An RNA of 177 nucleotides, treated with DMS and 2A3 and read out base by base. For 2A3 the reverse transcriptase was SuperScript II with manganese.
RNA sequence: GGGAACGACUCGAGUAGAGUCGAAAAUUGAGCCACAGCCAAGAAGAACUAUGCCAGCUGUGAGCCUGUGAAAUCACACAGGUCGUCUACUUCCACAAUACAAUAAUGGGACAGGCAUAGGAUAGACGAUUGCGCAUAAUUUCGAUUAUGCGCAAUCAAAAGAAACAACAACAACAAC
Reactivity to DMS in 0.01 (KOAc 150mM, MgCl2 10mM, bicine 150mM(pH8.5), 24C), signal-to-noise 3, nucleotides 027 to 126: u000u000g000a060g000c040c000a000c050a030g010c030c050a040a110g000a110a080g010a150a150c010u000a010u000g000c010c000a150g020c040u000g010u000g010a290g020c000c000u000g000u000g010a050a120a150u020c280a120c010a010c010a010g030g010u000c090g000u020c030u000a090c180u000u000c010c000a050c120a050a080u000a120c300a080a050u010a100a100u020g020g010g000a030c170a110g000g000c020a020u010a020g000g000a160u020a100g010a110c250
Reactivity to 2A3 in 0.01 (KOAc 150mM, MgCl2 10mM, bicine 150mM(pH8.5), 24C), signal-to-noise 3, nucleotides 027 to 126: u020u020g010a010g050c030c020a020c010a010g040c010c010a060a050g080a100a000g000a070a050c010u020a010u020g000c010c010a000g000c020u040g010u020g020a020g020c010c000u000g000u010g070a240a210a140u210c060a030c000a000c000a080g000g030u000c030g050u000c020u070a070c010u060u050c010c000a080c030a070a050u180a210c040a100a140u210a180a080u130g000g000g040a010c070a100g000g010c000a020u020a020g000g060a020u060a010g130a010c120